[RMDB]
RNA sequence: GGGAACGACUCGAGUAGAGUCGAAAAUUCCGAUGAUGUUCCCCAACCAGGGAUUGUCCUCCUCGAGUUUCUUGAUGGUUCUCUUGGCCUUCCGGAGCCUUCUCUCGAGAUCGUCCGCAUCCUUUCUGUGCUCAUUAGUUCGCUAAUGAGAAAAGAAACAACAACAACAAC
Reactivity to DMS in 0.01 (KOAc 150mM, MgCl2 10mM, bicine 150mM(pH8.5), 24C), signal-to-noise 9, nucleotides 027 to 129: u030u020c000c000g000a090u050g040a120u010g010u000u000c010c010c010c030a090a100c110c090a160g000g000g000a040u010u020g000u010c020c010u000c030c030u000c050g030a080g000u010u010u010c060u030u000g040a130u010g040g000u000u000c040u020c060u010u010g000g000c040c010u020u030c060c010g000g000a150g010c110c040u030u000c030u000c000u020c020g020a050g000a080u010c000g030u030c020c010g000c060a080u040c060c070u010u000u000c020u000g000u030g030
Reactivity to 2A3 in 0.01 (KOAc 150mM, MgCl2 10mM, bicine 150mM(pH8.5), 24C), signal-to-noise 9, nucleotides 027 to 129: u050u010c020c030g010a080u150g020a040u160g050u030u020c000c000c000c000a020a040c050c040a080g020g000g020a030u040u100g070u040c000c010u020c010c010u030c030g050a060g050u030u080u030c060u060u110g080a120u120g050g000u080u020c030u000c000u030u100g040g000c010c000u060u030c030c020g020g010a020g010c000c000u060u030c020u000c000u000c000g030a040g020a180u020c000g020u010c000c010g040c050a110u090c020c010u030u060u010c030u040g110u110g070
The data come from the RNA Mapping Database (RMDB), library 15KLIB. The record gives the reactivity of an RNA of 170 nucleotides to DMS and 2A3. Values cover nucleotides 27 to 129. The reactions ran in a buffer of 150 mM KOAc, 10 mM MgCl2 and 150 mM bicine (pH 8.5), at 24 C. For 2A3 the reverse transcriptase was SuperScript II with manganese.